Source: RMDB library OK2TST, as collected in RNAgym. This 177-nucleotide RNA was probed chemically with 2A3 and DMS.
RNA sequence: GGGAACGACUCGAGUAGAGUCGAAAAACAUUCCUCCUGGAGAGUGGCAGCCUUUCUCAGUAACCUUUUCCUUUCAUACCACUUCAUUUCCUUAAACCCAAAAUGACUCGCAGUCACUUCCUGGGGAACCCAUUAUUUGGUUCGCCAAAUAAUGGGUAAAAGAAACAACAACAACAAC
Reactivity to 2A3 in 0.01 (KOAc 150mM, MgCl2 10mM, bicine 150mM(pH8.5), 24C), signal-to-noise 4, nucleotides 027 to 126: a000c020a050u070u020c000c020u010c000c020u050g030g010a080g000a030g070u050g040g010c040a040g010c020c000u040u090u030c020u020c030a050g050u040a100a110c010c000u050u020u040u050c020c000u060u080u030c040a060u070a120c040c000a050c020u040u040c040a080u020u030u050c000c010u030u050a110a130a130c030c010c020a080a070a030a110u090g040a010c010u020c070g030c050a020g010u000c010a010c040u020u020c000c020u020g000g020g000g020a010
Reactivity to DMS in 0.01 (KOAc 150mM, MgCl2 10mM, bicine 150mM(pH8.5), 24C), signal-to-noise 5, nucleotides 027 to 126: a080c140a300u010u000c020c010u010c040c020u020g000g010a090g010a060g020u000g010g030c040a100g010c020c040u010u000u000c010u010c030a110g010u000a070a070c060c020u000u000u000u000c010c030u010u010u000c070a090u010a110c060c030a080c060u010u000c050a070u000u000u000c020c010u000u010a070a090a170c040c010c020a040a050a060a100u020g000a050c040u000c100g020c110a080g010u000c020a050c100u000u000c030c030u000g000g000g000g000a160
Overview
In probing experiments dimethyl sulfate is read out at A N1 and C N3, which are open when not base-paired. DMS adducts were read by reverse transcription with MarathonRT. For 2A3 the reverse transcriptase was SuperScript II with manganese. The RNA was probed in 150 mM KOAc, 10 mM MgCl2 and 150 mM bicine (pH 8.5) at 24 C. The 2A3 profile rests on 6,728 reads.